RNA sequence: GGGAACGACUCGAGUAGAGUCGAAAACACACUGGGCCAAGAGCAGCUGCCAUUGCAGAUUCGAGUCACGUCCUUUUUUCCUUCCUUCUCCUUCUUGGAGUUACAACAGAAGCUGGGGAGGUGAGAGCUAUUAGAUUAUCUUCGGAUAAUCUAAUAGAAAAGAAACAACAACAACAAC
Reactivity to 2A3 in 0.01 (KOAc 150mM, MgCl2 10mM, bicine 150mM(pH8.5), 24C), signal-to-noise 6, nucleotides 027 to 126: c040a000c000a010c060u060g030g040g020c020c020a080a010g030a010g040c030a010g030c010u030g010c030c030a100u050u160g010c020a010g040a120u060u040c010g020a000g020u010c010a020c130g050u050c000c000u060u070u010u000u030u080c010c000u030u050c020c000u040u050c030u020c010c000u030u070c020u040u090g030g010a070g040u130u100a080c050a150a010c010a060g050a070a010g030c100u110g000g000g000g010a010g000g020u050g020a110g010a010g030
Reactivity to DMS in 0.01 (KOAc 150mM, MgCl2 10mM, bicine 150mM(pH8.5), 24C), signal-to-noise 7, nucleotides 027 to 126: c090a100c110a070c070u000g000g000g010c040c040a080a090g000a070g010c040a060g010c040u000g000c020c100a070u000u000g010c070a100g000a090u000u010c020g010a050g010u010c020a100c170g010u000c010c010u000u000u000u000u000u000c030c020u000u000c010c010u000u000c010u000c080c010u000u000c040u000u000g020g010a100g010u010u010a080c230a080a110c100a050g000a050a040g020c100u000g010g000g020g000a020g000g000u000g010a030g000a110g010